[RMDB]
Overview: Source: RMDB library M2RFPK, as collected in RNAgym. The record gives the reactivity of an RNA of 207 nucleotides to 2A3.
RNA sequence: GGGAACGACUCGAGUAGAGUCGAAAAAGCUGCUCAGUAUACGUACUGAGCAGCAAGGGGUUGACGCGGACACCCCUUCAGGCGCGCGCCCAAGCUCCGUACGCCGCCUCAUACGUGAGGCGGCGAAAUAGGUGUAUCUGGUUCGCCAGAUACACAACCAGACUAAAUAGUUCGCUAUUUAGUCUGGAAAAGAAACAACAACAACAAC
Reactivity to 2A3 in 0.01 (KOAc 150mM, MgCl2 10mM, bicine 150mM(pH8.5), 24C), signal-to-noise 2, nucleotides 027 to 156: a000g000c000u000g000c000u010c010a010g000u030a060u020a100c200g020u000a010c010u000g000a000g020c020a000g000c000a000a000g000g010g000g000u010u110g090a060c060g000c000g020g000a010c000a010c000c020c000c060u020u120c090a020g030g000c070g010c060g030c060g030c120c000c020a020a000g020c060u010c000c020g000u030a050c040g000c000c000g040c030c000u030c000a050u030a140c270g080u040g010a010g000g000c050g000g000c010g000a000a020a000u120a000g140g020u000g000u000a000u010c000u000g000g030u060u020c090g010c060c000a000g000a000u000a000c000a000c000a000a010